[RMDB]
RNA sequence: GGGAACGACUCGAGUAGAGUCGAAAAGAUAUGGACUAUCGGACGCGAUAAGCCUGUGUCGGAAACGACAUAAGGCUUUUGACGCGUUGAUAGUCCUAAGUCAAACUCGAUGCUUCGGCAUCGAGAACGUGAAGUCACUGUUCGCAGUGACUUCACGAAAAGAAACAACAACAACAAC
Reactivity to 2A3 in 0.01 (KOAc 150mM, MgCl2 10mM, bicine 150mM(pH8.5), 24C), signal-to-noise 1, nucleotides 027 to 126: g000a010u010a050u130g000g000a010c000u000a000u010c050g080g020a010c010g050c000g120a240u090a300a000g000c040c010u040g000u000g000u020c020g020g000a030a090a000c020g020a000c000a000u070a110a190g000g000c020u000u010u010u020g020a040c040g050c000g000u000u060g000a000u000a000g000u050c000c020u000a010a000g010u010c010a070a070a140c020u000c000g000a000u000g000c000u070u030c300g130g000c000a000u000c000g010a020g010a000a000
Reactivity to DMS in 0.01 (KOAc 150mM, MgCl2 10mM, bicine 150mM(pH8.5), 24C), signal-to-noise 1, nucleotides 027 to 126: g000a030u000a090u020g000g000a000c000u000a000u000c010g020g050a000c000g030c000g010a090u030a000a010g020c000c000u000g020u000g010u020c000g040g000a020a030a070c020g000a010c000a020u000a040a110g010g020c000u000u000u000u020g010a240c140g000c000g040u030u000g000a010u000a020g010u000c000c000u010a010a040g010u000c000a170a170a170c010u000c000g000a000u000g010c020u000u050c250g010g020c010a000u000c000g030a000g030a050a060